RNA sequence: GGGAACGACUCGAGUAGAGUCGAAAAGAGACAGGGUUCGCCCUGUCUCAAAGAACCCGAAGAAAACCGAAAUAAAACGGUAUGGUACGCGACCAACAACAAAAACUAAGACCUUCGGGUCUUAGAACAUCAAGAAUUGGUUCGCCAAUUCUUGAUGAAAAGAAACAACAACAACAAC
Reactivity to DMS in 0.01 (KOAc 150mM, MgCl2 10mM, bicine 150mM(pH8.5), 24C), signal-to-noise 2, nucleotides 027 to 126: g000a000g030a000c000a030g000g030g000u000u000c300g020c000c000c000u000g000u000c010u000c000a000a040a120g000a180a180c000c000c020g020a070a190g000a080a050a110a050c030c030g010a120a100a100u000a090a070a090a090c050g030g000u000a040u010g000g010u010a060c070g000c130g020a030c050c000a030a070c110a030a030c020a090a070a060a110a200c000u000a000a000g000a010c000c000u010u010c180g030g020g020u000c000u000u000a000g010a090a100
Reactivity to 2A3 in 0.01 (KOAc 150mM, MgCl2 10mM, bicine 150mM(pH8.5), 24C), signal-to-noise 2, nucleotides 027 to 126: g000a000g000a000c010a000g040g030g020u060u030c040g090c000c010c010u010g010u000c000u000c000a000a000a000g000a040a100c010c000c030g010a110a060g050a050a080a020a010c010c000g080a130a190a050u300a020a110a050a020c010g000g000u070a110u070g030g030u100a060c100g000c040g260a020c030c010a010a040c030a010a010c000a020a180a000a010a040c010u010a010a000g000a010c020c000u020u090c230g100g010g000u000c000u000u000a000g010a010a020